[RMDB]
RNA sequence: GGGAACGACUCGAGUAGAGUCGAAAAAGCGACUCUACGGAGUCGCAGCAUUUUGGGUGUGUGAUUUGUAGCAAAGUGAUAUGUAUUUGAUCAUCCCCUUGUUGCAAACCUCACGCCAAAGAUGAAAACUCGACCGUCGGUUCGCCGACGGUCGAGUAAAAGAAACAACAACAACAAC
Reactivity to 2A3 in 0.01 (KOAc 150mM, MgCl2 10mM, bicine 150mM(pH8.5), 24C), signal-to-noise 1, nucleotides 027 to 126: a010g020c020g000a000c000u030c000u000a100c190g000g010a000g050u000c000g020c000a000g010c000a040u010u020u000u060g070g020g000u010g010u000g010u000g020a250u020u020u010g010u010a010g000c000a000a010a000g080u080g040a010u000a020u210g050u170a210u290u070u100g090a040u120c000a040u000c000c000c000c000u000u000g010u010u010g000c000a000a000a010c000c000u000c000a000c000g000c000c000a090a000a030g040a000u060g030a000a110a000